The record gives the reactivity of an RNA of 170 nucleotides to 2A3 and DMS. For 2A3 the reverse transcriptase was SuperScript II with manganese. The reactions ran in a buffer of 150 mM KOAc, 10 mM MgCl2 and 150 mM bicine (pH 8.5), at 24 C. The DMS profile rests on 25,602 reads.
RNA sequence: GGGAACGACUCGAGUAGAGUCGAAAAAGUGUGAUCAAUUUCUGUUACAUGCAUCAAAUGGAACUUGCUAAUGGUACACAUACCGGUUCAGCAUUUGAUGGUACUAUGUAUGGUGCCUUUAUGGAUAUAGCACUGGACUUCGGUCCAGUGAAAAGAAACAACAACAACAAC
Reactivity to 2A3 in 0.01 (KOAc 150mM, MgCl2 10mM, bicine 150mM(pH8.5), 24C), signal-to-noise 7, nucleotides 027 to 129: a010g070u120g010u040g040a050u040c050a090a080u040u110u050c020u040g060u040u050a010c000a090u070g060c000a020u000c000a000a010a010u020g020g000a000a030c010u040u090g080c060u130a090a040u070g010g040u130a070c140a010c010a100u040a030c020c020g010g000u020u030c040a130g040c020a080u010u000u010g010a010u030g000g000u030a040c040u080a020u080g040u000a040u050g030g010u040g010c020c000u040u180u140a100u170g040g020a050u040a040u030a190g040
Reactivity to DMS in 0.01 (KOAc 150mM, MgCl2 10mM, bicine 150mM(pH8.5), 24C), signal-to-noise 5, nucleotides 027 to 129: a070g000u020g020u040g010a060u030c090a060a140u000u000u000c050u050g000u050u020a060c040a060u000g000c050a000u000c060a010a020a020u040g020g020a000a000c050u030u040g040c150u040a040a040u050g020g020u060a020c170a070c110a000u030a070c150c160g030g040u000u000c020a090g000c000a050u000u000u000g020a000u040g000g040u040a030c040u060a000u040g000u020a000u010g020g040u060g000c010c010u010u040u070a090u060g000g000a080u000a070u040a110g000